[RMDB]
RNA sequence: GGGAACGACUCGAGUAGAGUCGAAAAUGUGUUUUUGUUAAACUUUUGGACAAAGACUUGUGGACAAGUGCAAAAAAUAAAUCCUCUUUUGCAACCCAGAACUCAUUGUUCAGUAUGAGUUUUGAUACUAACUACCGUAGUUCGCUACGGUAGUUAGAAAAGAAACAACAACAACAAC
Reactivity to 2A3 in 0.01 (KOAc 150mM, MgCl2 10mM, bicine 150mM(pH8.5), 24C), signal-to-noise 3, nucleotides 027 to 126: u190g050u020g030u030u000u010u010u010g030u020u040a090a080a040c030u100u050u120u060g080g000a000c030a020a010a000g000a030c020u050u070g060u040g110g020a070c120a190a060g040u010g000c010a010a020a000a020a020a040u160a040a130a020u060c020c000u060c050u000u010u000u010g010c010a000a030c010c020c000a020g020a030a000c000u000c000a010u000u030g070u140u040c060a060g050u130a060u100g050a020g010u000u020u060u000g030a040u080a080
Reactivity to DMS in 0.01 (KOAc 150mM, MgCl2 10mM, bicine 150mM(pH8.5), 24C), signal-to-noise 3, nucleotides 027 to 126: u030g020u010g010u000u000u010u000u000g020u000u010a060a050a100c070u000u010u020u010g000g000a050c020a030a030a040g030a020c060u010u000g010u000g000g000a060c090a090a090g020u000g000c000a000a000a030a030a080a040u020a070a070a120u020c130c100u000c070u000u000u000u000g000c020a050a060c090c050c000a020g000a010a020c080u000c000a050u000u000g000u000u020c150a070g000u020a060u020g010a030g000u000u000u000u000g010a180u030a140